[RMDB]
RNA sequence: GGGAACGACUCGAGUAGAGUCGAAAACCGCAGCGGUUAUUUGCGACCUGAAUUCACGCCAUGAGCUGCGGGACGGUCGCUCAGCAUCAACGACGGCAGGAGAUGAUCUCGCCUUCAUCUCAAGCGGCUGGACGUCAGCUUUCGAGCUGACGUCCAGAAAAGAAACAACAACAACAAC
Reactivity to 2A3 in 0.01 (KOAc 150mM, MgCl2 10mM, bicine 150mM(pH8.5), 24C), signal-to-noise 2, nucleotides 027 to 126: c000c010g000c030a000g020c000g220g030u040u050a130u060u180u040g000c010g030a020c010c000u090g150a170a130u210u050c110a090c060g020c000c010a090u280g120a010g030c030u010g030c040g000g000g000a010c000g000g020u000c020g000c070u070c020a060g020c010a080u100c050a080a060c050g170a010c030g040g030c060a080g050g160a010g000a000u020g000a010u030c020u020c090g030c040c000u000u000c000a000u000c010u000c000a000a030g030c040g040g000
This 177-nucleotide RNA was probed chemically with 2A3. It was measured as part of the RMDB library OK1LIB. The RNA was probed in 150 mM KOAc, 10 mM MgCl2 and 150 mM bicine (pH 8.5) at 24 C. For 2A3, 907 sequencing reads were counted.